The record gives the reactivity of an RNA of 177 nucleotides to 2A3 and DMS. For 2A3 the reverse transcriptase was SuperScript II with manganese. The RNA was probed in 150 mM KOAc, 10 mM MgCl2 and 150 mM bicine (pH 8.5) at 24 C. For DMS, 10,081 sequencing reads were counted. The data come from the RNA Mapping Database (RMDB), library OK2TST.
RNA sequence: GGGAACGACUCGAGUAGAGUCGAAAAGAACUCUAUCCUUGUCAACCUUUGCGCGUGGUUGUGGAUAGUAAAGGUGUGAUCCCCCCAGAGGCAAAUAUCUUUCAUAGCACCGGGAAAUCCCUCUAUGGUCUAAGAAUAGUUUCGACUAUUCUUAGACAAAAGAAACAACAACAACAAC
Reactivity to 2A3 in 0.01 (KOAc 150mM, MgCl2 10mM, bicine 150mM(pH8.5), 24C), signal-to-noise 3, nucleotides 027 to 126: g020a070a030c020u020c010u060a000u010c010c000u060u140g130u150c010a010a000c010c000u030u060u150g080c080g000c030g050u060g020g000u010u010g040u050g000g030a000u040a010g010u030a040a070a040g030g010u030g030u070g100a280u170c030c010c010c020c000c010a020g030a020g090g000c020a010a120a000u110a040u050c010u030u170u040c030a020u060a090g010c000a010c010c000g000g000g000a040a110a010u020c000c030c000u000c000u030a120u150g060
Reactivity to DMS in 0.01 (KOAc 150mM, MgCl2 10mM, bicine 150mM(pH8.5), 24C), signal-to-noise 7, nucleotides 027 to 126: g000a130a140c150u000c010u000a010u000c000c000u000u000g020u010c010a030a060c000c010u000u010u010g010c090g030c110g020u000g010g010u000u000g020u010g010g000a020u000a020g000u000a040a080a100g010g010u000g010u000g010a220u020c010c000c010c020c020c030a080g000a060g010g010c140a050a070a070u000a060u000c040u010u000u010c080a090u010a170g020c040a030c020c020g000g010g010a070a090a130u000c050c010c010u000c110u000a090u010g000